[RMDB]
RNA sequence: GGGAACGACUCGAGUAGAGUCGAAAAUAUAUCUGUUACUCUGUAUGUUUGGUGCUUUCCAUGAGAAAUGACAUACCAUUUUUCCUUAUACUGUGUUACCCAAAGUAAAAAUGUCAGGUGGCAACAUGUGACUUAGUAUUUAACAGUCAACUGACUCUCAUGCUCACUUAUUCGUAAGUGAGCAUGAAAAAGAAACAACAACAACAAC
Reactivity to DMS in 0.01 (KOAc 150mM, MgCl2 10mM, bicine 150mM(pH8.5), 24C), signal-to-noise 2, nucleotides 027 to 156: u010a080u000a040u010c050u010g000u010u010a080c020u000c060u010g020u010a090u000g000u000u000u010g000g010u000g000c010u000u000u020c050c020a150u000g020a150g020a070a070a090u000g020a160c060a160u000a070c040c000a070u000u000u030u000u000c020c040u020u010a150u020a070c050u000g020u000g000u020u000a120c030c030c030a090a070a110g020u000a030a030a060a110a060u010g000u000c040a030g000g000u000g000g030c010a030a080c070a060u000g020u000g030a060c080u000u000a110g030u000a090u000u000u000a090a150c040a100g010u000c000a060a070c050u010g000a070c010u000c050
Reactivity to 2A3 in 0.01 (KOAc 150mM, MgCl2 10mM, bicine 150mM(pH8.5), 24C), signal-to-noise 3, nucleotides 027 to 156: u230a000u020a040u030c030u030g070u030u050a050c020u040c060u100g040u090a080u020g070u040u130u090g060g000u040g020c040u060u040u000c050c030a100u110g020a030g040a170a100a030u060g030a090c020a050u100a080c020c010a030u090u020u000u040u060c000c000u080u120a080u020a080c050u090g020u010g060u150u080a070c000c000c010a010a000a090g030u090a060a120a090a010a030u070g000u030c020a000g060g010u050g010g000c010a040a020c020a110u120g060u040g060a020c000u140u080a040g050u020a090u070u130u010a050a040c020a030g020u000c000a010a000c030u030g000a000c000u000c000